[RMDB]
RNA sequence: GGGAACGACUCGAGUAGAGUCGAAAAAGUAUCGAGCCGAUCGCUUGAUACAAAUGCCAGCUAUGUGGCAAAGUGUCAUAGCCAUAGGGAUACGAACUAUGAAAGUAUCCAAGACUCAUAGGAGUCAGCAUUGUUCAAGGUUCGCCUUGAACAAUGCAAAAGAAACAACAACAACAAC
Reactivity to 2A3 in 0.01 (KOAc 150mM, MgCl2 10mM, bicine 150mM(pH8.5), 24C), signal-to-noise 2, nucleotides 027 to 126: a000g000u000a000u000c010g000a000g000c040c070g120a020u090c070g000c000u000u000g000a000u000a000c000a000a020a000u080g000c000c000a010g000c000u000a000u020g010u010g000g000c000a000a180a180g100u020g000u010c000a000u000a000g000c010c000a030u030a100g000g000g010a000u020a000c010g100a040a020c100u100a170u220g100a070a080a080g010u000a000u000c000c000a000a070g020a000c020u010c000a080u170a120g070g070a000g050u000c010a000
Reactivity to DMS in 0.01 (KOAc 150mM, MgCl2 10mM, bicine 150mM(pH8.5), 24C), signal-to-noise 1, nucleotides 027 to 126: a010g000u000a000u000c000g010a000g010c020c170g020a130u090c230g050c010u000u020g000a020u000a000c000a110a040a140u040g000c000c030a050g000c020u010a000u030g000u070g000g000c000a010a130a010g000u000g000u010c000a000u010a000g000c000c120a120u030a070g000g010g000a020u000a040c080g000a110a120c230u070a080u000g000a160a120a130g000u000a000u000c000c000a080a030g000a000c000u000c000a130u060a090g000g000a000g000u000c010a090